Notes
Structure probing data (2A3 and DMS) for a 177-nucleotide construct. The data come from the RNA Mapping Database (RMDB), library OK2TRN. For DMS, 2,238 sequencing reads were counted. Conditions: 150 mM KOAc, 10 mM MgCl2 and 150 mM bicine (pH 8.5), 24 C.
[RMDB]
RNA sequence: GGGAACGACUCGAGUAGAGUCGAAAAAACACUAGGGCCAGGCAAUCUUGACGGCUUACGCAACGUUUUAAGCAUGUGUGCGCAGGUGCUAGCAAAGAAUGUGGCAGUGAAAUCUGGGCGCCCUGGCGCACCACGGUCUGUUCGCAGACCGUGGUGCAAAAGAAACAACAACAACAAC
Reactivity to 2A3 in 0.01 (KOAc 150mM, MgCl2 10mM, bicine 150mM(pH8.5), 24C), signal-to-noise 2, nucleotides 027 to 126: a000a000c120a010c040u090a090g000g100g000c000c030a040g050g000c020a060a050u020c030u030u070g060a080c050g030g030c030u020u060a030c050g000c030a060a010c030g020u040u080u100u150a040a040g070c060a050u060g050u040g030u000g110c040g000c040a040g050g060u100g040c030u110a060g030c070a130a080a020g080a080a090u110g030u060g090g000c020a010g000u040g140a050a100a030u010c010u020g000g030g060c060g010c040c020c000u040g030g030c040
Reactivity to DMS in 0.01 (KOAc 150mM, MgCl2 10mM, bicine 150mM(pH8.5), 24C), signal-to-noise 3, nucleotides 027 to 126: a040a050c080a080c030u000a010g020g020g030c000c040a110g010g000c060a050a050u000c020u020u000g020a280c090g020g000c030u000u020a020c050g010c010a090a040c030g000u000u000u000u000a090a130g020c130a030u020g020u010g030u000g010c010g020c020a010g010g020u010g010c050u000a100g030c080a080a040a030g000a040a070u000g020u010g020g010c030a020g010u000g020a090a060a110u000c020u000g010g000g020c120g010c080c030c010u010g010g010c150